RNA sequence: GGGAACGACUCGAGUAGAGUCGAAAAGUACGGCGAGCCGUACGGAAACCAUCCAUAUUAUGGCAUGCGAAAGGAUGGUGUACCGUAGGAGUCCAUCCGAAACGUACGCGGUCAAUUGCAGCAUCCUCGGUGAUCGUGCAUGGAUGGGAAAGCAUGCCCCUUAUCAUCAGUUCGCUGAUGAUAAGGGAAAAGAAACAACAACAACAAC
Reactivity to DMS in 0.01 (KOAc 150mM, MgCl2 10mM, bicine 150mM(pH8.5), 24C), signal-to-noise 2, nucleotides 027 to 156: g000u000a000c000g010g040c040g010a110g090c020c020g000u000a040c010g000g040a130a170a050c010c000a020u000c020c020a120u000a110u010u010a070u000g010g020c010a020u000g050c010g030a080a110a210g000g010a040u000g010g020u000g030u000a090c030c060g000u000a080g050g020a170g000u010c040c000a080u010c030c000g020a030a100a120c120g010u000a030c050g000c000g020g040u010c020a060a160u010u000g040c060a170g010c020a130u010c060c050u010c050g020g010u000g000a040u000c020g020u000g020c030a110u000g010g020a060u010g000g000g010a080a040a130g020c030a050u000g000c010
Reactivity to 2A3 in 0.01 (KOAc 150mM, MgCl2 10mM, bicine 150mM(pH8.5), 24C), signal-to-noise 6, nucleotides 027 to 156: g020u010a000c010g020g040c140g070a060g100c000c030g010u010a020c010g000g020a080a020a000c000c000a010u000c030c010a050u080a110u300u160a080u130g050g000c020a010u020g020c020g070a110a020a030g010g000a000u000g000g040u010g020u080a050c030c010g040u050a070g020g120a070g070u010c030c010a010u000c000c010g050a090a060a030c070g050u140a020c030g000c020g010g010u030c040a080a150u120u180g090c080a050g020c030a120u140c020c020u060c060g050g000u050g020a030u040c010g010u030g030c040a050u140g000g010a010u000g000g010g030a040a030a000g000c000a000u030g010c000
The data come from the RNA Mapping Database (RMDB), library OK3TST.
Chemical mapping of a 207-nucleotide RNA with DMS and 2A3.
The DMS profile rests on 4,963 reads.
The RNA was probed in 150 mM KOAc, 10 mM MgCl2 and 150 mM bicine (pH 8.5) at 24 C.
For DMS the reverse transcriptase was MarathonRT.